[RMDB]
Notes
The record gives the reactivity of an RNA of 170 nucleotides to 2A3 and DMS. Conditions: 150 mM KOAc, 10 mM MgCl2 and 150 mM bicine (pH 8.5), 24 C.
RNA sequence: GGGAACGACUCGAGUAGAGUCGAAAAUUCGAUCCGGACCGGCUCAUCUCGGCAAGAGGCGGCAGUCCUCAGUACUCUUACUCUUUCCUAUAAAGAGGAGACUGCUGGACUCGCCGCCCAAGCCCGAAAACCUAGCGAUUCGUCGCUAGGAAAAGAAACAACAACAACAAC
Reactivity to 2A3 in 0.01 (KOAc 150mM, MgCl2 10mM, bicine 150mM(pH8.5), 24C), signal-to-noise 9, nucleotides 027 to 129: u060u030c040g020a030u030c030c030g010g020a030c010c010g010g000c010u020c030a130u030c030u000c010g000g000c020a050a040g080a120g030g000c000g000g000c000a000g000u000c000c000u010c000a030g010u100a300c010u010c010u080u120a200c010u020c010u030u100u040c060c080u190a180u210a300a030a000g000a000g010g010a000g010a000c000u010g050c040u010g000g000a000c000u010c070g010c000c000g000c000c000c000a000a000g000c000c010c000g030a030a030a030a040
Reactivity to DMS in 0.01 (KOAc 150mM, MgCl2 10mM, bicine 150mM(pH8.5), 24C), signal-to-noise 8, nucleotides 027 to 129: u050u010c050g020a090u040c100c030g000g000a100c090c000g020g000c000u030c030a050u020c050u000c020g020g000c070a080a050g000a130g030g020c020g010g030c020a000g030u010c000c010u000c010a000g030u030a120c050u000c030u030u020a300c020u030c010u010u020u010c170c200u060a100u040a090a030a010g030a030g020g010a040g000a060c000u000g020c150u030g010g010a030c000u000c160g050c000c000g020c000c000c000a020a100g020c030c000c010g000a050a030a060a090